[RMDB]
RNA sequence: GGGAACGACUCGAGUAGAGUCGAAAAGGCUAGUUUGCUAUCGUAGUCUUUGCUCUCGGAGGUGAAUUUGAGCUGGCUACGGUACAGGAUCACCUCCAACUGUACCGAUAGCAUUUUUAUAGCCGAAGGGUGGCAGCUAGUUCGCUAGCUGUUACCCAAAAGAAACAACAACAACAAC
Reactivity to 2A3 in 0.01 (KOAc 150mM, MgCl2 10mM, bicine 150mM(pH8.5), 24C), signal-to-noise 9, nucleotides 027 to 126: g000g000c010u010a010g040u020u020u010g000c000u000a010u010c020g090u070a060g040u020c040u070u090u140g070c040u030c030u050c120g010g020a030g010g020u050g050a120a150u110u130u190g070a080g040c030u030g030g000c010u030a040c150g040g000u020a080c000a000g010g030a030u040c010a010c010c010u010c010c010a020a030c020u020g030u070a010c000c000g000a000u000a000g000c000a000u000u000u000u020u070a190u010a010g000c000c010g000a050a010
Reactivity to DMS in 0.01 (KOAc 150mM, MgCl2 10mM, bicine 150mM(pH8.5), 24C), signal-to-noise 8, nucleotides 027 to 126: g010g010c000u000a010g010u010u000u000g000c020u000a000u000c070g010u020a060g000u010c060u010u020u020g010c100u020c130u010c140g000g010a050g010g010u000g000a060a080u010u020u010g000a300g010c020u000g010g010c050u040a080c090g020g010u020a030c020a040g000g000a100u010c030a030c000c010u010c000c010a130a070c040u010g010u020a040c070c040g000a030u000a000g010c010a010u010u010u010u020u040a070u010a030g020c000c010g000a090a100